Notes:
Structure probing data (2A3) for a 177-nucleotide construct. Reactivities are rounded to 0.1 and cut off at 0 and 3. The RNA was probed in 150 mM KOAc, 10 mM MgCl2 and 150 mM bicine (pH 8.5) at 24 C.
RNA sequence: GGGAACGACUCGAGUAGAGUCGAAAAGAAAAGAAACAGCUACGAAAGAAAGAAACGCACAAGGCGCAGCGUAGCUGAACUGCGCCACGAGGUGCCUGCCACUCGAAAAGAAAGAAAUGGCGAAAAAGGGAUAGUCUAUCUUCGGAUAGACUAUCCCAAAAGAAACAACAACAACAAC
Reactivity to 2A3 in 0.01 (KOAc 150mM, MgCl2 10mM, bicine 150mM(pH8.5), 24C), signal-to-noise 2, nucleotides 027 to 126: g040a000a000a000a000g160a000a080a000c030a000g000c000u040a030c050g140a220a000a140g110a060a230a020g120a100a150a000c070g000c010a010c000a150a020g010g020c010g010c000a000g020c000g020u030a000g000c000u000g000a020a000c000u000g000c000g000c000c000a020c000g000a010g000g020u090g020c070c050u030g000c000c000a010c000u060c000g010a090a090a020a020g100a010a020a000g070a000a190a020u120g000g010c090g010a010a020a070a030a030
For 2A3 the reverse transcriptase was SuperScript II with manganese.